[RMDB]
RNA sequence: GGGAACGACUCGAGUAGAGUCGAAAAGAUAUGGAUCCCACAUCGAAGCGUCAGUCGGAAACGACUGAACGCAAUGUGAUGUUGGGAUCCUAAGUCAAACAACAGUCCGGUUCGCCGGACUGUUGAACGUUUUAAUCAGGUUCGCCUGAUUAAAACGAAAAGAAACAACAACAACAAC
Reactivity to 2A3 in 0.01 (KOAc 150mM, MgCl2 10mM, bicine 150mM(pH8.5), 24C), signal-to-noise 1, nucleotides 027 to 126: g020a000u020a010u050g000g010a010u020c000c100c000a000c000a010u050c080g300a300a030g000c010g020u010c000a000g000u000c000g020g000a000a000a020c010g010a010c010u010g000a050a040c000g070c000a010a040u300g080u130g010a010u000g040u300u190g000g030g000a000u010c000c000u000a000a010g000u000c000a090a020a070c000a000a000c000a000g000u000c020c020g000g120u070u150c300g030c100c010g000g000a010c000u010g000u010u000g000a010a000
Reactivity to DMS in 0.01 (KOAc 150mM, MgCl2 10mM, bicine 150mM(pH8.5), 24C), signal-to-noise 3, nucleotides 027 to 126: g020a010u000a020u010g000g000a010u000c000c000c000a040c000a000u000c000g020a180a130g020c010g000u000c000a000g020u000c000g010g000a020a010a030c010g030a020c000u000g000a040a020c010g040c000a070a070u000g010u010g030a010u000g020u010u000g020g010g000a000u000c000c000u000a000a070g000u010c000a170a170a300c020a010a000c000a010g010u000c000c000g030g000u010u010c300g020c010c000g040g000a000c000u000g000u000u000g010a080a140
The data come from the RNA Mapping Database (RMDB), library TTRDES. Chemical mapping of a 177-nucleotide RNA with 2A3 and DMS. The reactions ran in a buffer of 150 mM KOAc, 10 mM MgCl2 and 150 mM bicine (pH 8.5), at 24 C. For 2A3, 7,927 sequencing reads were counted.